This 170-nucleotide RNA was probed chemically with 2A3 and DMS. The DMS profile rests on 8,149 reads. Reactivities are given for positions 27 through 129.
RNA sequence: GGGAACGACUCGAGUAGAGUCGAAAAUUCCGAGCGAAGAGCCGAACCGGGAAGAGGAAGCGCCCGAGAGGGAGCCAAUGCCAAAGAGGUGGGGAUCGUCGGAAGGUAUCGUCCCAAUGACCAAGAGAACGCCAGUUCUUCGGAACUGGCAAAAGAAACAACAACAACAAC
Reactivity to 2A3 in 0.01 (KOAc 150mM, MgCl2 10mM, bicine 150mM(pH8.5), 24C), signal-to-noise 4, nucleotides 027 to 129: u060u020c010c010g000a050g020c040g050a040a040g020a030g050c030c030g000a020a010c010c010g010g000g000a050a030g010a040g030g000a020a010g030c020g010c010c010c000g030a040g010a020g020g010g000a010g000c020c010a060a040u140g050c000c020a060a060a010g030a040g030g030u080g000g020g000g020a010u020c000g000u020c010g020g030a030a010g010g020u070a050u080c040g020u020c000c000c000a030a060u100g050a020c010c020a060a010g080a000g000a080a010c030
Reactivity to DMS in 0.01 (KOAc 150mM, MgCl2 10mM, bicine 150mM(pH8.5), 24C), signal-to-noise 5, nucleotides 027 to 129: u030u010c000c000g010a160g060c130g030a030a070g020a140g030c090c030g040a110a100c070c080g010g000g000a050a070g010a070g000g010a040a140g040c140g020c060c010c020g010a080g000a000g030g050g020a070g020c090c130a090a080u050g020c000c070a070a040a090g030a070g000g000u020g020g010g010g020a040u020c040g080u020c060g020g080a060a020g000g030u060a080u050c090g010u020c050c020c040a150a130u060g030a080c040c060a040a030g050a090g010a050a070c150
Record summary:
For 2A3, 8,199 sequencing reads were counted.